RNA sequence: GGGAACGACUCGAGUAGAGUCGAAAACGGGUGACUGUUUGCGGAUCAGCAAAAACAGCUCCUGCACCGAGAACCAGCCUACGUUGGUAGCACCGAAGGCGGACACCUCGGCCAGCGUGAGGGGGCCGUACACAGUCUAGUUCGCUAGACUGUGUACAAAAGAAACAACAACAACAAC
Reactivity to 2A3 in 0.01 (KOAc 150mM, MgCl2 10mM, bicine 150mM(pH8.5), 24C), signal-to-noise 9, nucleotides 027 to 126: c020g020g020g030u040g120a280c020u020g020u060u030u050g000c030g040g110a290u280c120a070g050c010a080a140a020a010a050c010a020g010c000u010c000c020u040g020c050a070c020c030g030a050g020a080a050c010c020a030g100c020c020u050a040c030g030u010u040g080g030u070a060g150c050a020c030c010g050a080a030g000g020c010g030g030a060c060a040c040c010u010c010g030g000c030c040a030g010c040g050u090g080a110g000g010g000g010g000c020c050
Reactivity to DMS in 0.01 (KOAc 150mM, MgCl2 10mM, bicine 150mM(pH8.5), 24C), signal-to-noise 9, nucleotides 027 to 126: c060g020g010g010u000g010a160c020u000g010u000u000u000g010c220g010g010a120u010c210a170g010c040a040a120a050a060a040c030a030g000c010u010c000c010u000g000c080a220c020c010g000a060g010a100a100c030c010a150g020c010c020u000a060c060g010u000u000g010g000u010a100g010c100a150c090c020g010a110a040g010g010c010g010g010a080c150a100c070c000u000c020g000g000c070c030a050g010c060g010u010g010a070g000g010g000g000g020c210c130